[RMDB]
RNA sequence: GGGAACGACUCGAGUAGAGUCGAAAAGGCGCAGCCGACAACAUGCCCAGGUAGCCCAGACCUUCAAGGCUACGGUGCGUUGCGACGCACGGUCUGAUUCUUCACAACGACGUUCACCGCGUCUUCUACAACCGGCAAAGAUUCGUCUUUGCCGGAAGGUAUGUACGACCUUCGGGUCGUACAUACCAAAAGAAACAACAACAACAAC
Reactivity to 2A3 in 0.01 (KOAc 150mM, MgCl2 10mM, bicine 150mM(pH8.5), 24C), signal-to-noise 2, nucleotides 027 to 156: g050g000c260g010c270a050g070c000c010g010a000c010a120a040c020a030u130g040c010c020c010a060g050g000u010a010g010c000c070c130a040g010a000c000c000u030u010c030a000a010g000g080c000u030a000c020g000g000u000g000c000g010u010u090g040c100g190a020c000g010c020a000c020g000g000u000c000u000g000a050u290u000c050u150u160c080a070c030a250a060c140g000a000c000g030u140u260c070a070c160c000g030c040g010u010c010u110u000c020u280a190c040a070a060c010c000g000g000c020a020a000a000g020a000u020u060c080g030u020c130u000u000u020g000c000c000g000g000a010a000